This 177-nucleotide RNA was probed chemically with 2A3 and DMS. The 2A3 profile rests on 2,242 reads. Reactivities are rounded to 0.1 and cut off at 0 and 3.
RNA sequence: GGGAACGACUCGAGUAGAGUCGAAAAGUUGUUAAAAAUCUGGGUUUACCUUCGCCUGUUGUAUUAGAGCGUUUUGAAAGUGCUCAGCCAGUAGUGAAAGGUGCAGUAUUGGUUGGCGCGGCGCCAAUCAGUAAAUAUUAUUCGUAAUAUUUACUGAAAAAGAAACAACAACAACAAC
Reactivity to 2A3 in 0.01 (KOAc 150mM, MgCl2 10mM, bicine 150mM(pH8.5), 24C), signal-to-noise 2, nucleotides 027 to 126: g010u030u000g030u040u040a070a100a060a060a130u040c050u070g020g010g070u030u090u100a020c000c000u030u020c020g010c020c010u040g040u090u030g010u060a140u140u120a060g040a000g020c010g050u000u040u090u220g240a210a150a030g050u060g000c010u010c080a010g030c010c010a020g020u070a010g060u030g070a160a050a050g030g050u060g000c000a000g030u010a020u050u050g010g000u010u050g020g000c030g030c070g140g000c010g000c000c030a000a040
Reactivity to DMS in 0.01 (KOAc 150mM, MgCl2 10mM, bicine 150mM(pH8.5), 24C), signal-to-noise 6, nucleotides 027 to 126: g010u000u000g010u010u010a030a090a080a080a080u000c080u010g010g020g000u010u000u010a050c030c020u000u000c070g020c030c020u000g000u000u000g010u000a080u000u000a110g010a050g020c010g020u000u010u010u010g010a100a100a110g000u000g010c010u000c000a080g000c030c010a020g010u000a040g010u000g010a070a060a070g010g020u010g010c040a040g000u000a060u000u000g000g010u000u000g000g010c030g030c130g000g000c050g020c020c030a030a080